[RMDB]
Notes: An RNA of 207 nucleotides, treated with DMS and 2A3 and read out base by base. It was measured as part of the RMDB library RNAMAK.
RNA sequence: GGGAACGACUCGAGUAGAGUCGAAAACGCUGGGAUGCGGUGGCAACUGGGAGCUGAAGCGCGCACGGCGAGGAUCAGUUGAACUACCAUACGCAUCCUGUGCUGAAGCGCGCACGGCAACCGAAAGGUGCGAAAUGGCUGGAUUCGUCCAGCCAAAGAUAUACUAAAGUUUCGACUUUAGUAUAUCAAAAGAAACAACAACAACAAC
Reactivity to DMS in 0.01 (KOAc 150mM, MgCl2 10mM, bicine 150mM(pH8.5), 24C), signal-to-noise 2, nucleotides 027 to 156: c020g020c030u010g010g010g010a080u010g000c010g000g020u020g010g010c050a050a020c070u010g000g010g000a080g000c010u010g000a060a070g020c050g080c010g060c040a300c020g020g000c000g000a030g020g000a080u000c020a130g020u020u000g010a090a090c100u000a240c050c010a060u000a110c020g010c020a080u000c000c000u000g010u010g040c020u000g010a110a070g000c010g050c030g010c030a190c060g000g000c040a070a260c110c000g030a100a110a110g030g010u000g010c000g000a090a120a070u020g000g020c010u000g000g030a050u000u000c300g000u000c030c000a030g000c000c000a000a010a060
Reactivity to 2A3 in 0.01 (KOAc 150mM, MgCl2 10mM, bicine 150mM(pH8.5), 24C), signal-to-noise 5, nucleotides 027 to 156: c040g000c020u040g020g000g010a010u030g000c010g010g020u020g020g020c010a030a010c030u020g000g000g030a020g010c010u020g020a230a040g000c000g000c010g000c000a020c020g020g000c000g010a150g010g020a010u010c010a010g010u030u030g030a040a060c050u160a070c300c040a050u210a140c020g010c010a000u010c000c000u020g020u000g000c010u020g030a150a040g000c000g000c010g020c020a000c010g010g000c030a020a020c000c000g050a080a040a000g010g010u030g010c030g040a110a040a080u100g000g000c010u000g020g000a030u060u080c210g060u030c090c000a010g010c000c010a010a000a000